[RMDB]
RNA sequence: GGGAACGACUCGAGUAGAGUCGAAAAGUGUAGCGUUUGAGCGACGCUUUACUGACUUCAAGGAUGAAGGACGCGUCGCCGCCACCCUAGAGGCGGCAUCCCCCGCGUGACGCCCUCUGCAGGCACCAAGUGGACGACAUUUCGAUGUCGUCCACUUAAAAGAAACAACAACAACAAC
Reactivity to DMS in 0.01 (KOAc 150mM, MgCl2 10mM, bicine 150mM(pH8.5), 24C), signal-to-noise 2, nucleotides 027 to 126: g000u000g030u020a040g000c150g000u000u030u000g020a190g070c050g040a020c020g000c000u000u000u030a110c010u020g010a270c120u000u000c040a140a220g000g010a080u000g000a190a000g010g000a090c130g010c000g030u020c010g020c010c030g020c040c020a050c040c030c020u030a060g010a050g020g000c040g000g020c010a050u020c000c000c010c030c020g000c010g020u010g000a040c070g000c060c020c010u000c020u000g030c070a060g010g010c100a050c090c140
Reactivity to 2A3 in 0.01 (KOAc 150mM, MgCl2 10mM, bicine 150mM(pH8.5), 24C), signal-to-noise 3, nucleotides 027 to 126: g080u080g040u040a040g020c020g030u030u110u200g150a100g030c050g000a000c010g030c000u050u030u130a070c030u020g050a020c010u010u010c040a070a120g220g030a160u110g040a030a020g030g050a000c040g000c000g000u020c030g010c000c000g000c000c010a060c010c010c000u040a050g020a060g050g040c010g000g000c010a060u040c000c020c010c000c020g010c010g000u010g030a040c030g040c040c010c010u020c010u030g060c030a030g020g030c020a010c030c030